[RMDB]
An RNA of 177 nucleotides, treated with 2A3 and DMS and read out base by base. Source: RMDB library M2PK50, as collected in RNAgym. 2A3 adducts were read by reverse transcription with SuperScript II with manganese. For DMS, 2,536 sequencing reads were counted. The 2A3 profile rests on 3,432 reads.
RNA sequence: GGGAACGACUCGAGUAGAGUCGAAAAUGACGUCGUUUCGACGACGUCAACAUAAAAUCAGCGGUAAAUAAAUAGGAGGCGUUACCGCUGAACGCCUCCAUACGAGAGGGCUAUUCGUAGCCCUCAAACUUAACCUAUGCUUCGGCAUAGGUUAAGUAAAAGAAACAACAACAACAAC
Reactivity to 2A3 in 0.01 (KOAc 150mM, MgCl2 10mM, bicine 150mM(pH8.5), 24C), signal-to-noise 3, nucleotides 027 to 126: u050g000a010c000g020u010c000g010u000u060u070c180g060a020c010g000a000c000g000u000c000a000a010c010a030u260a020a130a010a080u020c000a000g000c010g190g250u250a060a070a030u080a030a050a030u150a160g000g010a000g010g000c010g010u000u020a120c000c000g000c000u000g000a000a000c000g010c000c000u010c000c000a030u130a050c200g050a150g000a000g080g000g000c000u020a010u020u120c180g080u030a000g000c010c000c000u000c000a000a010
Reactivity to DMS in 0.01 (KOAc 150mM, MgCl2 10mM, bicine 150mM(pH8.5), 24C), signal-to-noise 3, nucleotides 027 to 126: u000g010a010c010g050u000c000g000u000u000u040c150g000a020c010g000a000c000g020u000c010a020a060c180a100u010a070a050a090a130u000c010a000g020c000g010g000u020a010a020a030u000a010a020a020u000a150g010g000a020g000g000c000g000u000u000a080c050c000g000c000u000g000a020a030c000g000c000c000u010c000c010a140u010a050c230g020a160g000a000g000g010g020c000u000a030u000u000c220g030u000a010g010c000c000c000u000c000a000a020